[RMDB]
The record gives the reactivity of an RNA of 207 nucleotides to 2A3.
2A3 adducts were read by reverse transcription with SuperScript II with manganese.
It was measured as part of the RMDB library OK3TST.
RNA sequence: GGGAACGACUCGAGUAGAGUCGAAAAGCCUUACUUUAUAGAAGGAGGAAAGAAUUCUAGACAGCAUUAACAACAGAUGUCCAGUGUUGAUUUUGCAAAUGCUCUGUGCUUUAAUUUUCAACCUUGUUCUGCUCCAAUGAAAUAGAGCUUUUGGAAAACCCGUUUUAAAUUUCGAUUUAAAACGGGUAAAAGAAACAACAACAACAAC
Reactivity to 2A3 in 0.01 (KOAc 150mM, MgCl2 10mM, bicine 150mM(pH8.5), 24C), signal-to-noise 1, nucleotides 027 to 156: g000c000c000u000u040a210c020u260u300u080a230u020a070g070a050a050g000g020a000g000g050a160a000a000g020a090a020u060u230c070u170a050g000a000c020a000g130c000a020u030u130a090a000c040a020a000c000a040g110a260u150g110u040c080c070a090g040u000g040u070u040g000a070u050u150u080u040g000c040a000a010a050u050g000c000u020c000u040g090u040g090c000u100u040u120a160a160u000u010u170u150c090a100a210c020c040u040u050g060u010u010c000u020g130c000u000c000c000a020a020u110g130a070a050a110u020a070g050a000g100c000u000u000u080u040g140g000a000a300a000